[RMDB]
RNA sequence: GGGAACGACUCGAGUAGAGUCGAAAACUCAGUGAGUGAGUGACACUGUCUCAGUCUCUCAGUCUGAGUCAGACAGUGACAGUGUGUCACAGUCAGUGAGUGUGACACUCAGACUGACUCAGACUCACCCGUGUGGGUGAUUCGUCACCCACACGGGAAAAGAAACAACAACAACAAC
Reactivity to 2A3 in 0.01 (KOAc 150mM, MgCl2 10mM, bicine 150mM(pH8.5), 24C), signal-to-noise 3, nucleotides 027 to 126: c030u020c020a030g050u060g230a090g060u040g010a050g000u080g020a010c000a010c040u070g080u110c020u020c040a030g040u000c030u010c000u010c040a010g040u000c010u030g020a020g000u020c000a020g030a080c030a080g050u040g180a070c060a110g040u020g000u000g010u050c000a000c000a040g080u050c030a040g170u020g280a080g070u000g000u030g020a000c000a010c040u040c010a020g060a160c000u000g000a000c000u010c010a010g000a010c000u010c010a050
Reactivity to DMS in 0.01 (KOAc 150mM, MgCl2 10mM, bicine 150mM(pH8.5), 24C), signal-to-noise 2, nucleotides 027 to 126: c040u000c020a070g020u030g010a070g020u000g020a060g010u000g000a070c040a080c050u000g000u000c070u000c090a060g000u000c010u000c030u000c020a080g020u000c040u000g010a020g030u000c080a010g020a050c080a070g020u010g010a090c130a080g010u000g010u000g000u000c020a040c040a020g000u010c030a210g010u000g010a030g000u010g010u000g010a050c060a030c010u010c040a110g000a170c020u000g000a020c000u010c060a050g010a020c010u000c090a060
Source: RMDB library OK2TRN, as collected in RNAgym. Chemical mapping of a 177-nucleotide RNA with 2A3 and DMS. The RNA was probed in 150 mM KOAc, 10 mM MgCl2 and 150 mM bicine (pH 8.5) at 24 C. For DMS the reverse transcriptase was MarathonRT. Reactivities are given for positions 27 through 126. For DMS, 1,688 sequencing reads were counted.